[RMDB]
RNA sequence: GGGAACGACUCGAGUAGAGUCGAAAAUAGCCGUUAUGCGCGAAGCGGUGUAGCGUCACUUUGAUGGCGGUACUAUGAAUUGAUGCAAGGUGUGGCGCGACCUUAAACAGUUCUGGUGGUGCUCUGAAAAACAAAUAGGCGUUCGCGCCUAUUUGAACACUUUUCUUGAGUUCGCUCAAGAAAAGUGAAAAGAAACAACAACAACAAC
Reactivity to 2A3 in 0.01 (KOAc 150mM, MgCl2 10mM, bicine 150mM(pH8.5), 24C), signal-to-noise 4, nucleotides 027 to 156: u110a000g020c010c000g030u060u050a090u190g070c050g000c010g020a010a020g010c020g030g000u050g000u030a030g060c010g010u000c030a020c110u220u170u240g150a230u090g050g000c000g010g060u020a020c030u050a070u180g080a100a050u100u080g060a070u110g120c030a020a020g030g010u050g020u060g040g000c000g020c010g030a010c000c000u050u090a080a170a020c030a040g020u070u030c020u040g030g000u020g020g010u040g000c020u010c020u080g040a100a050a000a000a010c010a000a010a000u000a000g000g000c020g040u060u060c210g010c000g000c080c000u000a000u000u010u000g000a030a000
Reactivity to DMS in 0.01 (KOAc 150mM, MgCl2 10mM, bicine 150mM(pH8.5), 24C), signal-to-noise 1, nucleotides 027 to 156: u000a140g020c010c000g000u000u000a070u000g020c050g050c020g010a130a130g030c020g000g000u010g080u010a070g020c000g040u000c020a040c040u000u010u040g010a070u010g020g070c000g040g040u000a020c040u020a040u010g010a050a150u000u000g010a090u010g030c080a070a050g020g030u040g020u000g010g020c030g050c020g000a050c000c030u000u000a070a090a090c050a110g020u000u010c020u010g000g030u020g010g020u010g020c030u000c070u000g010a000a050a090a100a120c020a010a000a020u000a010g030g050c010g000u010u000c300g030c020g030c000c000u000a000u000u020u000g010a130a140